RNA sequence: GGGAACGACUCGAGUAGAGUCGAAAAGAUGGCGGCGAAUGCGACUGAAACGGGGCUGCAGCCGAUCGCCGUGUCGGUACGGACCUUCUUGGCCGCGGCGAAGGUUCGAUGGAACAGCUUGGUCAGAUAUUAUUCAGGGGUUCGCCCCUGAAUAAUAAAAAGAAACAACAACAACAAC
Reactivity to 2A3 in 0.01 (KOAc 150mM, MgCl2 10mM, bicine 150mM(pH8.5), 24C), signal-to-noise 2, nucleotides 027 to 126: g080a030u140g070g000c020g010g010c040g040a100a030u130g070c070g060a090c080u040g040a000a060a040c040g040g000g020g010c040u060g000c060a010g010c030c040g020a030u000c040g060c080c040g010u080g030u070c010g000g040u040a040c040g000g030a020c010c000u050u010c010u070u180g120g000c000c030g000c070g020g000c040g010a020a010g000g020u010u030c020g010a070u090g020g080a070a030c010a050g020c000u000u070g050g020u050c000a020g020a120
Reactivity to DMS in 0.01 (KOAc 150mM, MgCl2 10mM, bicine 150mM(pH8.5), 24C), signal-to-noise 4, nucleotides 027 to 126: g010a090u000g020g030c010g010g000c010g000a090a070u010g020c060g020a090c030u000g000a040a080a140c130g010g000g000g030c060u000g010c050a120g020c010c010g000a060u000c010g010c070c110g010u010g010u000c010g000g000u000a140c040g030g010a040c020c010u000u000c040u000u000g010g010c000c020g000c070g000g000c200g000a050a040g010g000u000u000c030g000a090u010g000g000a070a080c050a070g000c030u000u010g010g010u010c050a100g000a210